Structure probing data (2A3) for a 207-nucleotide construct. It was measured as part of the RMDB library OK3TST. Conditions: 150 mM KOAc, 10 mM MgCl2 and 150 mM bicine (pH 8.5), 24 C. The 2A3 profile rests on 960 reads.

[RMDB]
RNA sequence: GGGAACGACUCGAGUAGAGUCGAAAAGUCAUGCCUUCGGGCAUGACAGGUACCGAGAGGUACCAAAUAGCGUACAGGAGACUCAGACUGUACGCUAAAAAAGUGUGUGUUCAAUAAGGUCCAAUUGAACACACACUAAAAUGGAUCAAGAGUGUUAUGACUGAUACCAUUUCGAUGGUAUCAGUCAAAAAGAAACAACAACAACAAC
Reactivity to 2A3 in 0.01 (KOAc 150mM, MgCl2 10mM, bicine 150mM(pH8.5), 24C), signal-to-noise 1, nucleotides 027 to 156: g000u000c000a000u000g030c000c010u060u070c190g060g010g000c000a000u000g000a000c000a020g000g000u000a000c020c010g020a030g010a010g070g000u010a000c000c030a020a100a000u060a000g000c000g000u000a000c000a000g000g070a070g050a130c000u010c080a040g020a070c000u010g030u000a000c000g000c000u030a070a000a000a000a000a000g000u000g010u000g000u000g000u000u000c020a000a000u040a120a050g130g030u090c030c010a030a020u000u000g000a000a000c000a000c000a000c000a000c020u000a000a020a000a030u230g110g000a050u070c050a090a040g020a010g030u090g050u080u070a080